The record gives the reactivity of an RNA of 177 nucleotides to DMS and 2A3.
[RMDB]
RNA sequence: GGGAACGACUCGAGUAGAGUCGAAAAGACGUUGAACGAGAACCUGAGAGAAGACGAAAUUCGCGUCAGAUACGAAAACGAAAACAAGGACGCAACGGACCUAUUGCUUCUUUCGAUCGACGACGCCGCUGAGAGGCUUAUUCGUAAGCCUCUCAGCAAAAGAAACAACAACAACAAC
Reactivity to DMS in 0.01 (KOAc 150mM, MgCl2 10mM, bicine 150mM(pH8.5), 24C), signal-to-noise 2, nucleotides 027 to 126: g010a120c080g050u020u000g020a100a050c090g020a060g020a010a140c060c160u020g020a040g000a070g020a010a130g000a070c010g020a040a060a100u020u010c120g050c030g040u000c160a050g020a020u040a130c120g020a070a160a020a110c090g050a100a040a110a240c150a110a090g010g000a000c040g000c040a110a090c150g000g000a090c100c110u000a120u000u030g000c020u030u000c020u010u000u040c020g000a000u000c000g020a030c040g000a000c000g000c050c080
Reactivity to 2A3 in 0.01 (KOAc 150mM, MgCl2 10mM, bicine 150mM(pH8.5), 24C), signal-to-noise 3, nucleotides 027 to 126: g040a020c020g020u080u100g120a210a040c040g010a010g030a100a090c020c060u140g010a040g000a000g030a080a030g010a000c130g060a080a080a100u170u080c060g010c020g030u010c010a050g010a090u150a020c030g030a000a020a160a080c100g090a110a030a010a030c110a020a070g060g030a020c000g020c040a080a050c080g040g070a080c040c060u120a120u090u120g010c000u000u000c000u020u020u020c000g040a040u000c000g050a030c020g000a000c020g050c060c010
Source information
Conditions: 150 mM KOAc, 10 mM MgCl2 and 150 mM bicine (pH 8.5), 24 C. DMS adducts were read by reverse transcription with MarathonRT.